RNA sequence: GGGAACGACUCGAGUAGAGUCGAAAAUACCGAUUGAAUGGCUCAGUGAGGCCUUCGGACUGGCACAGGGACGUUGGCAACGACGACCCAGUGCCGGAAAGUUCGUCAAACUUGGUCAUUUAGAGGAACAUCCCUCACAUUUCGAUGUGAGGGAUGUAAAAGAAACAACAACAACAAC
Reactivity to 2A3 in 0.01 (KOAc 150mM, MgCl2 10mM, bicine 150mM(pH8.5), 24C), signal-to-noise 3, nucleotides 027 to 126: u190a040c010c000g040a090u060u080g000a010a010u000g000g000c000u000c030a010g010u000g030a030g030g000c000c000u000u000c000g010g000a010c000u010g000g000c000a010c020a060g010g000g020a020c000g000u010u010g020g020c040a100a050c030g010a000c010g050a060c000c000c000a030g000u000g000c030c000g000g000a000a000a010g010u010u010c000g010u000c010a010a030a030c000u010u010g010g000u010c000a000u000u000u030a080g020a070g030g040a020
Reactivity to DMS in 0.01 (KOAc 150mM, MgCl2 10mM, bicine 150mM(pH8.5), 24C), signal-to-noise 3, nucleotides 027 to 126: u000a150c000c000g000a240u010u000g000a020a010u000g000g040c000u000c260a050g000u010g000a300g000g050c000c070u000u010c000g000g020a300c000u000g000g030c020a020c000a020g010g010g010a050c000g040u010u000g020g000c300a090a150c000g030a000c000g020a060c000c000c000a040g000u000g000c040c000g000g010a020a190a200g000u000u020c230g010u000c010a010a190a030c000u000u010g000g010u020c010a010u000u000u000a020g000a160g020g030a120